[RMDB]
RNA sequence: GGGAACGACUCGAGUAGAGUCGAAAAUAGAGCUGUCUUCCAGAGCCAGCUUGCGGACGUAGUUCACGGUGAGAUCGGAAGCGAGGUUGGCGACCAUGGACAUGGACAGACAAGCGGUUUUCAUGUCCAGUAGUAGGUGGUUCUCGAUGACGGGGUCAACCUUAUUACGGUUCGCCGUAAUAAGGUUAAAAGAAACAACAACAACAAC
Reactivity to 2A3 in 0.01 (KOAc 150mM, MgCl2 10mM, bicine 150mM(pH8.5), 24C), signal-to-noise 5, nucleotides 027 to 156: u160a010g040a020g020c030u020g000u030c010u100u020c050c040a060g020a020g060c010c010a020g010c000u040u080g030c020g010g030a020c040g010u110a040g030u140u130c070a060c100g070g070u120g050a100g010a100u100c030g010g020a040a030g030c020g010a020g030g050u030u030g040g010c030g040a030c030c040a060u040g000g010a010c010a010u010g020g010a010c040a030g080a060c080a070a020g090c100g080g020u010u000u030u060c000a010u020g010u010c010c010a000g010u020a010g000u010a020g020g070u040g020g000u060u010c020u010c020g070a060u070g030a020c030g000g000g000g030u030c030
Reactivity to DMS in 0.01 (KOAc 150mM, MgCl2 10mM, bicine 150mM(pH8.5), 24C), signal-to-noise 3, nucleotides 027 to 156: u000a090g010a090g010c000u000g010u000c010u010u040c020c030a130g000a300g020c040c020a120g010c030u000u010g030c040g000g000a130c050g020u000a100g020u000u000c040a080c040g000g030u000g010a130g000a110u010c030g000g000a180a090g020c030g000a070g010g000u000u000g020g000c010g000a070c040c030a130u000g020g010a030c020a040u000g000g020a030c100a140g000a130c070a080a120g020c080g010g000u010u000u000u010c020a020u010g010u000c000c010a050g030u000a080g000u000a050g020g010u000g010g020u000u000c020u010c020g000a130u000g020a120c040g000g010g040g020u000c050
An RNA of 207 nucleotides, treated with 2A3 and DMS and read out base by base. For DMS the reverse transcriptase was MarathonRT. Reactivities are given for positions 27 through 156. The 2A3 profile rests on 4,419 reads.